Record summary
An RNA of 207 nucleotides, treated with 2A3 and read out base by base. For 2A3 the reverse transcriptase was SuperScript II with manganese. Source: RMDB library M2RFPK, as collected in RNAgym. Reactivities are given for positions 27 through 156. Conditions: 150 mM KOAc, 10 mM MgCl2 and 150 mM bicine (pH 8.5), 24 C. The 2A3 profile rests on 823 reads.
RNA sequence: GGGAACGACUCGAGUAGAGUCGAAAAACGAGUCCGUACGCGGACUUGAAGGGCCCCAGAAGACCAAGGGGCCCAAACCUACCACUCAUUAGAUGCAUGGAAAUCACUAGGUGAUACGUCACCUAGAACACGCUUUUAAGCUUCGGCUUAAAAGCAACUGAAUCAACGUGUUCGCACGUUGAUUCAGAAAAGAAACAACAACAACAAC
Reactivity to 2A3 in 0.01 (KOAc 150mM, MgCl2 10mM, bicine 150mM(pH8.5), 24C), signal-to-noise 2, nucleotides 027 to 156: a000c010g000a010g000u000c000c030g000u020a000c300g000c000g040g000a000c000u000u000g030a020a000g010g020g000c000c010c000c000a050g100a300a040g060a250c110c020a140a070g000g010g000g000c000c000c010a000a000a000c000c000u000a020c000c030a020c050u090c030a030u050u300a060g080a120u160g110c110a040u010g060g050a050a080a090u140c020a120c060u000a010g010g020u010g010a030u010a020c290g030u020c030a000c000c000u000a000g000a010a000c040a000c070g000c000u010u000u000u000a000a000g010c000u040u070c140g080g000c000u000u000a000a000a000a000g000c000a000a000